[RMDB]
RNA sequence: GGGAACGACUCGAGUAGAGUCGAAAAGUCAACCUCUUAAGUUCCUCUUCUUCCUCCCUGCUGAGGUUCUUCCCUCCCGCCGUCAGCUGCUUCUUCUUGUUCUCGAGGGCCUUCCUUCGUCGGUGAUCCUGCCUCUCCUUGUCGGUGAAUUCUCCCCCUUAGAUAAGCACUUCGGUGCUUAUCUAAGAAAAGAAACAACAACAACAAC
Reactivity to DMS in 0.01 (KOAc 150mM, MgCl2 10mM, bicine 150mM(pH8.5), 24C), signal-to-noise 1, nucleotides 027 to 156: g000u010c040a050a100c000c010u010c030u010u010a120a110g030u000u000c020c020u000c050u010u000c030u000u010c020c020u010c030c030c010u000g000c140u010g020a090g040g050u010u010c060u000u000c050c000c050u010c020c010c020g050c080c030g010u000c040a120g050c030u010g010c020u000u000c050u000u000c050u010u000g020u000u000c030u040c030g010a220g000g030g000c040c020u000u000c000c030u000u010c030g000u020c060g000g000u010g020a060u000c030c040u000g010c050c030u000c040u000c020c000u020u050g020u000c000g030g030u010g010a070a150u000u000c060u010c010c040c060c130
An RNA of 207 nucleotides, treated with DMS and read out base by base. DMS adducts were read by reverse transcription with MarathonRT. The reactions ran in a buffer of 150 mM KOAc, 10 mM MgCl2 and 150 mM bicine (pH 8.5), at 24 C. The DMS profile rests on 3,510 reads.